[RMDB]
RNA sequence: GGGAACGACUCGAGUAGAGUCGAAAAGAUAUGGAGGGAGGACCAGUGACGAAACGCACUCGGAAACGAGUGUGGAACCGUCACCAGUCCGAGGAUCUCCUAAGUCAAAGCAGGGUUCGCCCUGCAAGAAAGAACGUAUCUUCGGAUACGUUCUUUCAAAAGAAACAACAACAACAAC
Reactivity to 2A3 in 0.01 (KOAc 150mM, MgCl2 10mM, bicine 150mM(pH8.5), 24C), signal-to-noise 2, nucleotides 027 to 126: g010a040u090a050u180g000g010a010g000g000g000a010g000g010a010c010c000a010g010u000g000a000c000g000a050a070a010c010g010c000a000c010u010c000g020g020a030a080a040c010g000a000g000u000g000u010g000g030a010a030c040c000g000u000c000a000c000c000a010g000u000c010c010g040a050g000g000a010u000c000u000c000c000u030a180a040g030u060c060a080a090a020g000c010a000g070g010g020u080u220c250g180c040c000c000u000g000c010a000a020
Reactivity to DMS in 0.01 (KOAc 150mM, MgCl2 10mM, bicine 150mM(pH8.5), 24C), signal-to-noise 4, nucleotides 027 to 126: g000a040u000a300u010g010g010a020g000g010g010a060g020g020a010c010c050a090g020u010g000a010c010g010a040a060a280c020g010c000a000c000u010c000g010g000a130a130a180c010g000a000g010u000g040u000g000g020a100a100c270c030g000u000c000a000c000c050a120g000u000c000c000g010a030g000g000a020u010c000u010c000c000u010a010a070g000u010c080a070a110a140g010c000a010g000g010g010u010u010c300g010c000c000c000u010g030c010a010a030
Background
Chemical mapping of a 177-nucleotide RNA with 2A3 and DMS. For DMS, 3,815 sequencing reads were counted. Values cover nucleotides 27 to 126. The RNA was probed in 150 mM KOAc, 10 mM MgCl2 and 150 mM bicine (pH 8.5) at 24 C. For 2A3 the reverse transcriptase was SuperScript II with manganese. The data come from the RNA Mapping Database (RMDB), library TTRDEL.